[RMDB]
RNA sequence: GGGAACGACUCGAGUAGAGUCGAAAAGAUAUGGAACUGAACUACAGGCCCGGACACAAUGAUGUCGGAAACGAUUGAGUGUCCGGAAGCCUGCAGUUCCUAAGUCAAAGCUGUCUUCGGACAGCAACAUUGGUAGCCUGUUCGCAGGCUACCAAUGAAAAGAAACAACAACAACAAC
Reactivity to 2A3 in 0.01 (KOAc 150mM, MgCl2 10mM, bicine 150mM(pH8.5), 24C), signal-to-noise 2, nucleotides 027 to 126: g010a010u040a010u080g000g010a000a000c000u010g000a050a020c060u160a050c300a000g010g000c020c020c000g040g020a020c000a000c000a000a300u300g110a110u300g050u020c020g000g040a050a030a040c000g000a000u150u280g140a070g020u000g020u000c000c010g000g020a010a000g030c000c010u000g010c000a000g000u020u000c000c000u020a040a010g030u060c040a130a000a070g000c000u010g000u010c010u110u130c290g120g000a000c010a000g050c010a000a000
Reactivity to DMS in 0.01 (KOAc 150mM, MgCl2 10mM, bicine 150mM(pH8.5), 24C), signal-to-noise 2, nucleotides 027 to 126: g030a040u000a250u010g010g000a000a000c000u000g000a080a020c100u050a300c030a020g010g000c020c000c000g000g000a020c010a000c000a130a150u020g010a060u020g010u010c020g010g010a110a060a120c010g030a020u000u010g000a140g000u000g010u000c000c000g010g020a040a040g000c010c000u000g010c000a000g000u000u000c000c020u000a030a140g000u000c000a130a120a100g000c000u000g000u000c000u000u010c210g020g000a000c000a000g010c000a040a050
An RNA of 177 nucleotides, treated with 2A3 and DMS and read out base by base. 2A3 adducts were read by reverse transcription with SuperScript II with manganese. The reactions ran in a buffer of 150 mM KOAc, 10 mM MgCl2 and 150 mM bicine (pH 8.5), at 24 C.